Structure probing data (2A3) for a 207-nucleotide construct.

RNA sequence: GGGAACGACUCGAGUAGAGUCGAAAACGUUGGGGGCGAAGCGACUAAAACUUACCCAACUCAUCCAAAGCACCCUGCCCGUCGGGCGGCUGCGGAUUAAAUCAGUAGACACGGCUAAGCAUGUAGUACCGACAGCGGAGUACUGGCGGACGGGGGUCGAUACACUUUUGUUCGCAAAAGUGUAUCGAAAAGAAACAACAACAACAAC
Reactivity to 2A3 in 0.01 (KOAc 150mM, MgCl2 10mM, bicine 150mM(pH8.5), 24C), signal-to-noise 2, nucleotides 027 to 156: c030g000u010u000g020g010g000g050g010c070g030a040a000g030c030g110a050c090u130a050a050a020a010c020u040u050a040c010c000c000a000a000c020u020c010a090u030c050c040a090a040a060g100c050a070c010c000c000u000g000c000c000c000g000u000c000g000g020g000c000g010g030c010u000g040c000g000g000a010u020u080a010a060a060u130c040a010g090u100a050g110a040c050a040c150g140g000c060u080a120a040g060c020a030u100g010u030a050g020u050a150c020c020g170a170c040a000g010c050g040g060a150g030u080a200c020u000g000g010c010g000g000a010c010g010g000g000g000g000u000
Conditions: 150 mM KOAc, 10 mM MgCl2 and 150 mM bicine (pH 8.5), 24 C. 2A3 adducts were read by reverse transcription with SuperScript II with manganese. It was measured as part of the RMDB library ARCHII.